[RMDB]
RNA sequence: GGGAACGACUCGAGUAGAGUCGAAAACGCAGAGGGUUCUGAUAACAAAGAACCCAGAUAGCCGCAUCGGUAUUAUAGGAUGUAGUCGGUGAGCCGGAAUGCCUGCAUCGUAAGCCUAUAAGUAAAUUUAAGUGUAAUCACUUCGGUGAUUACACAAGAUUGAAUCCCAGUUCGCUGGGAUUCAAUCAAAAGAAACAACAACAACAAC
Reactivity to 2A3 in 0.01 (KOAc 150mM, MgCl2 10mM, bicine 150mM(pH8.5), 24C), signal-to-noise 2, nucleotides 027 to 156: c100g000c020a020g080a140g100g000g000u000u000c010u000g120a140u110a270a080c050a050a150a000g010a000a000c000c000c000a000g000a000u020a000g060c040c060g050c120a140u080c030g060g000u060a020u160u090a030u110a030g020g030a040u030g030u160a010g140u100c000g020g000u030g030a020g020c010c000g090g040a100a000u090g030c010c020u060g040c000a010u000c020g040u060a020a020g000c000c020u070a090u050a120a010g070u100a090a140a200u210u300u080a180a040g000u000g000u000a000a000u000c000a000c000u050u020c100g020g000u000g000a010u010u000a000c000a000c020a000a000